[RMDB]
RNA sequence: GGGAACGACUCGAGUAGAGUCGAAAAUUCAGGUCUCUGGUUGGGGCUAGCCGCGACCAUGGUGGUCAUUCAGGCCGCCCACGAUACUGGAGUGGGGCCCGCGAGACUGCUGGCUAGUGGGGCACUAUCAAUAGUACGGCUUCGGCCGUACUAUUGAAAAAGAAACAACAACAACAAC
Reactivity to DMS in 0.01 (KOAc 150mM, MgCl2 10mM, bicine 150mM(pH8.5), 24C), signal-to-noise 4, nucleotides 027 to 126: u020u010c100a110g000g020u010c020u000c020u010g000g010u000u010g010g000g000g000c030u000a080g010c020c000g000c180g010a050c020c050a150u010g010g030u020g000g010u010c000a090u030u040c140a200g000g010c010c110g000c020c000c040a050c110g000a100u030a090c130u010g020g000a180g030u010g000g010g000g010c020c010c020g010c080g000a050g000a060c050u010g000c050u020g010g000c050u000a050g000u000g020g010g000g010c090a080c080u000a100
Reactivity to 2A3 in 0.01 (KOAc 150mM, MgCl2 10mM, bicine 150mM(pH8.5), 24C), signal-to-noise 4, nucleotides 027 to 126: u130u070c030a020g020g110u030c030u020c020u080g080g040u040u090g030g000g020g000c020u010a090g070c020c000g060c100g080a100c030c030a060u140g120g000u090g020g020u030c030a050u160u180c070a060g010g000c000c020g030c020c000c010a070c090g010a040u130a200c050u090g050g040a040g020u050g000g030g020g020c000c000c000g000c020g010a040g020a070c030u050g030c000u040g030g040c030u020a050g020u020g020g010g000g080c010a020c080u080a090